[RMDB]
The data come from the RNA Mapping Database (RMDB), library OK2TRN.
Structure probing data (DMS and 2A3) for a 177-nucleotide construct.
For DMS the reverse transcriptase was MarathonRT.
The RNA was probed in 150 mM KOAc, 10 mM MgCl2 and 150 mM bicine (pH 8.5) at 24 C.
The 2A3 profile rests on 1,704 reads.
RNA sequence: GGGAACGACUCGAGUAGAGUCGAAAAGAGGAGAGCCUGAAGUGGACAGAAUUUUUACAAGAUGCUGUGCUGAUCAAUAUUGGAGUAAUUAUCAUCAAGAACCAGUUAUUUUGUAUGAUGAUUUAGGCGAUAUACGAGGGUUCGCCCUCGUAUAUCGAAAAGAAACAACAACAACAAC
Reactivity to DMS in 0.01 (KOAc 150mM, MgCl2 10mM, bicine 150mM(pH8.5), 24C), signal-to-noise 4, nucleotides 027 to 126: g010a100g010g000a100g010a100g000c040c040u010g020a040a070g030u000g010g010a060c060a070g010a090a010u000u010u000u010u000a090c120a080a070g000a050u000g000c020u010g010u000g020c020u000g000a080u000c080a040a090u010a090u010u010g020g020a120g020u000a030a040u000u000a020u000c020a020u000c040a040a040g010a050a120c160c080a070g000u000u000a100u000u000u000u000g010u000a030u000g010a030u000g000a040u010u010u010a080g000g010
Reactivity to 2A3 in 0.01 (KOAc 150mM, MgCl2 10mM, bicine 150mM(pH8.5), 24C), signal-to-noise 2, nucleotides 027 to 126: g090a020g030g010a040g000a010g040c000c000u010g030a060a020g050u030g080g000a020c020a030g080a070a060u130u100u010u050u050a050c050a020a020g020a050u020g000c010u000g020u020g000c040u060g020a080u070c060a080a040u050a140u140u150g090g040a060g040u060a020a060u040u050a030u060c020a010u020c010a020a040g030a050a060c040c000a030g010u120u140a120u100u070u050u040g030u020a060u040g020a010u020g020a000u070u040u050a080g100g000